Source: RMDB library OK2TST, as collected in RNAgym. The record gives the reactivity of an RNA of 177 nucleotides to 2A3 and DMS. The reactions ran in a buffer of 150 mM KOAc, 10 mM MgCl2 and 150 mM bicine (pH 8.5), at 24 C. The 2A3 profile rests on 40,682 reads. In probing experiments dimethyl sulfate is read out at A N1 and C N3, which are open when not base-paired.
RNA sequence: GGGAACGACUCGAGUAGAGUCGAAAACGCAUGCAUGAGCUGGCAGAGGGCGUCACCUCCAUCAAUGUGUAUGGAGGCCCCGUGCUGAACCCCUACAACAACACAAUGCAUGUCGGAGGGAGCAGUGACAAUAAACACAAUUCGUUGUGUUUAUUGUAAAAGAAACAACAACAACAAC
Reactivity to 2A3 in 0.01 (KOAc 150mM, MgCl2 10mM, bicine 150mM(pH8.5), 24C), signal-to-noise 9, nucleotides 027 to 126: c020g010c010a010u030g000c000a010u050g050a020g070c070u100g050g000c020a020g100a240g090g010g020c080g080u090c060a050c020c000u000c010c000a010u020c010a110a300u300g070u040g060u240a010u010g010g000a010g000g010c000c000c000c000g030u040g000c000u020g030a080a080c020c010c030c000u120a070c040a140a000c010a040a000c020a010c010a080a040u040g000c010a010u030g040u100c030g010g030a060g020g020g020a050g030c030a020g040u030g090
Reactivity to DMS in 0.01 (KOAc 150mM, MgCl2 10mM, bicine 150mM(pH8.5), 24C), signal-to-noise 9, nucleotides 027 to 126: c100g010c010a010u000g010c010a020u000g000a150g020c080u000g010g010c080a100g010a130g010g010g010c200g010u010c120a140c040c000u000c000c000a010u000c020a140a130u010g020u010g020u010a010u000g000g000a020g010g010c050c010c020c030g010u010g020c040u000g000a120a100c040c010c010c020u000a120c110a060a090c070a030a040c070a060c120a120a040u000g000c020a010u000g010u010c050g010g000a100g000g000g000a100g020c090a080g010u010g010